An RNA of 177 nucleotides, treated with 2A3 and DMS and read out base by base. For 2A3 the reverse transcriptase was SuperScript II with manganese.
RNA sequence: GGGAACGACUCGAGUAGAGUCGAAAAUAUUUGAAUAUGAGCAAACAUAGUGUGGUUAUACCAUCGUUUGUGGCAUAGUAUAUGAUAUAACAUCGCUAGCAUUAUUUGCACCAUAAGACUCAGUGUGCGUUUUAAACCGUUUCGACGGUUUAAAACGAAAAGAAACAACAACAACAAC
Reactivity to 2A3 in 0.01 (KOAc 150mM, MgCl2 10mM, bicine 150mM(pH8.5), 24C), signal-to-noise 1, nucleotides 027 to 126: u020a010u030u080u090g020a060a010u080a040u030g000a020g080c000a000a000a000c020a030u170a110g080u080g000u000g170g070u130u130a080u130a190c000c000a050u020c100g000u000u000u080g030u050g170g030c000a010u020a000g000u000a080u030a020u130g050a000u010a000u000a030a050c030a020u040c020g000c070u040a070g000c010a050u010u000a050u070u200u080g000c010a020c050c010a020u020a170a010g060a050c010u010c080a010g000u090g030u070g200
Reactivity to DMS in 0.01 (KOAc 150mM, MgCl2 10mM, bicine 150mM(pH8.5), 24C), signal-to-noise 3, nucleotides 027 to 126: u000a020u020u000u000g000a150a180u000a020u000g020a300g000c030a020a030a040c030a180u010a070g010u000g010u000g010g010u000u000a090u010a300c010c010a020u000c140g010u000u000u000g040u000g000g020c000a030u000a030g020u000a110u010a030u000g010a010u000a000u010a030a070c070a050u010c080g010c070u010a080g000c070a060u010u010a110u010u020u000g020c040a100c070c040a050u000a020a070g020a110c040u000c040a060g010u010g020u000g020

Values are in units of 0.01, from 0 to 300, in steps of 10.